[RMDB]
RNA sequence: GGGAACGACUCGAGUAGAGUCGAAAAUCUAAUGAGUGUUAUAAAUGAUCUCAAGAGUGGGGAGAAGAUAAACCAGAUUGAAAGUUUAUUGAAGAUCGGCUUUUCUGCAAACAUGACCACAGUAGCCACCUUUUGGUGGAUUCGUCCACCAAAAGGUAAAAGAAACAACAACAACAAC
Reactivity to DMS in 0.01 (KOAc 150mM, MgCl2 10mM, bicine 150mM(pH8.5), 24C), signal-to-noise 3, nucleotides 027 to 126: u000c040u000a080a140u000g010a050g030u010g020u000u000a120u000a030a140a160u010g010a080u010c010u000c040a040a080g010a120g020u000g000g010g010g010a090g000a130a060g020a030u000a020a020a050c020c050a090g020a140u000u010g000a130a060a080g010u010u000u000a050u010u000g000a130a160g000a040u000c040g010g010c050u000u000u010u000c040u010g000c090a080a040a070c140a050u000g000a090c050c030a040c050a040g020u000a090g020c080c070
Reactivity to 2A3 in 0.01 (KOAc 150mM, MgCl2 10mM, bicine 150mM(pH8.5), 24C), signal-to-noise 2, nucleotides 027 to 126: u010c000u030a120a000u040g010a010g070u050g050u100u080a130u070a170a120a140u150g010a060u030c010u000c020a050a050g120a000g110u080g000g030g010g000a010g010a020a020g010a030u040a030a030a040c040c050a050g020a060u070u120g090a040a020a050g030u040u120u100a090u120u040g030a030a000g050a070u020c040g030g000c010u110u010u040u040c010u010g070c020a020a110a040c040a070u160g010a030c050c000a000c020a020g040u070a000g030c030c040